[RMDB]
RNA sequence: GGGAACGACUCGAGUAGAGUCGAAAAGAUGUAGUUAGUCAAGCGGUUAAUCCAAGUACGCCUAGAAUGAGAGCAUUUAGUUUAGCGGCAGUAGCUGCAGAUGCACCGGCAGCUGGCACAGAUAUUAUCUAGCAACUUCAUUCGUGAAGUUGCUAGAAAAAGAAACAACAACAACAAC
Reactivity to DMS in 0.01 (KOAc 150mM, MgCl2 10mM, bicine 150mM(pH8.5), 24C), signal-to-noise 3, nucleotides 027 to 126: g010a070u010g000u000a030g000u000u000a070g010u000c100a060a080g000c050g020g000u010u010a070a080u030c020c060a080a090g030u000a030c040g020c060c010u000a070g020a070a060u010g000a110g020a070g000c070a040u020u010u020a120g020u030u010u020a070g010c020g010g000c040a100g020u010a020g020c000u000g000c010a020g010a040u020g010c050a090c030c050g000g010c030a070g010c020u000g000g020c060a050c100a060g000a090u000a060u040u030a060
Reactivity to 2A3 in 0.01 (KOAc 150mM, MgCl2 10mM, bicine 150mM(pH8.5), 24C), signal-to-noise 3, nucleotides 027 to 126: g060a030u090g000u100a050g040u080u060a030g030u060c090a140a010g040c030g050g020u020u110a050a020u040c010c000a030a060g050u030a030c060g070c000c010u010a080g070a170a080u120g030a050g020a030g100c060a080u050u060u150a080g050u020u040u150a060g010c040g050g000c030a010g050u080a040g020c010u010g030c020a020g000a160u070g010c000a010c020c000g030g000c000a030g020c010u010g000g010c050a010c000a000g070a020u140a120u220u170a040

The record gives the reactivity of an RNA of 177 nucleotides to DMS and 2A3. In probing experiments dimethyl sulfate is read out at A N1 and C N3, which are open when not base-paired. Reactivities are given for positions 27 through 126. Source: RMDB library OK1LIB, as collected in RNAgym. For DMS the reverse transcriptase was MarathonRT. For DMS, 5,731 sequencing reads were counted. The reactions ran in a buffer of 150 mM KOAc, 10 mM MgCl2 and 150 mM bicine (pH 8.5), at 24 C.